Chemical mapping of a 177-nucleotide RNA with DMS and 2A3. The 2A3 profile rests on 1,646 reads. For DMS the reverse transcriptase was MarathonRT. 2A3 is a SHAPE reagent: it acylates the 2'-hydroxyl of flexible nucleotides of all four kinds. The RNA was probed in 150 mM KOAc, 10 mM MgCl2 and 150 mM bicine (pH 8.5) at 24 C.
RNA sequence: GGGAACGACUCGAGUAGAGUCGAAAACCGUGCUAAGCGGGGAGGUAGCGGUGCCCUGUACUCGCAAUCCGCUCUAGCGAGGCCGAAUCCCUUCUCGAGGUUAUGUUACUGUAAGGCCUGCCUUAAGUCAUACGUCCUCCUUCGGGAGGACGUAUGAAAAAGAAACAACAACAACAAC
Reactivity to DMS in 0.01 (KOAc 150mM, MgCl2 10mM, bicine 150mM(pH8.5), 24C), signal-to-noise 2, nucleotides 027 to 126: c070c010g020u070g000c000u020a040a300g000c030g010g010g000g000a070g000g000u000a110g030c040g000g000u020g020c030c110c060u030g010u010a040c050u040c020g050c010a120a120u030c000c010g000c000u000c090u000a050g020c000g000a280g000g040c060c000g010a140a090u000c020c000c000u010u000c020u000c000g000a080g000g030u000u000a030u000g000u000u010a080c060u010g020u010a090a090g000g030c040c030u010g000c060c020u000u020a060a090g000
Reactivity to 2A3 in 0.01 (KOAc 150mM, MgCl2 10mM, bicine 150mM(pH8.5), 24C), signal-to-noise 2, nucleotides 027 to 126: c030c000g000u080g030c000u050a030a030g010c020g020g010g010g020a060g030g000u050a000g020c000g020g020u020g010c060c010c080u100g050u060a080c040u040c090g040c030a010a060u040c020c000g000c030u020c060u020a030g000c010g000a040g020g020c000c010g040a050a070u100c000c030c000u050u020c050u030c040g080a040g030g040u150u060a050u160g070u060u080a080c050u030g090u170a070a070g020g010c010c010u030g040c010c010u100u050a130a040g040